Chemical mapping of a 207-nucleotide RNA with 2A3.
The data come from the RNA Mapping Database (RMDB), library RSTRND.
2A3 adducts were read by reverse transcription with SuperScript II with manganese.
RNA sequence: GGGAACGACUCGAGUAGAGUCGAAAACCGCUUAAUUGGCUAACUGUCCUUGGUAACGUGCUCGUGCGCCUCCAAAGACAGACGACUACACGAGAUGCUGGAAUUGUUCUUCUCAUUGACAAUUUCUUAAGAAUUAAAUUGAGAUCGUUUUUUGAUCGGUUAACGUAACGUUCGCGUUACGUUAACCAAAAGAAACAACAACAACAAC
Reactivity to 2A3 in 0.01 (KOAc 150mM, MgCl2 10mM, bicine 150mM(pH8.5), 24C), signal-to-noise 1, nucleotides 027 to 156: c000c000g030c030u060u140a120a040u290u300g090g060c080u090a140a090c000u030g000u000c000c010u010u010g040g000u100a180a120c010g000u010g000c040u030c040g030u060g000c020g000c030c080u010c010c000a020a000a000g010a000c000a040g080a050c030g080a040c100u150a050c020a000c010g010a000g000a000u020g030c000u000g000g000a000a000u000u000g050u000u000c020u100u000c010u000c010a020u000u010g000a000c000a020a000u000u010u010c040u000u050a060a040g070a070a040u200u200a090a030a050u000u020g000a000g010a010u090c070g030u020u020u000u050u040u100g180a230u170c120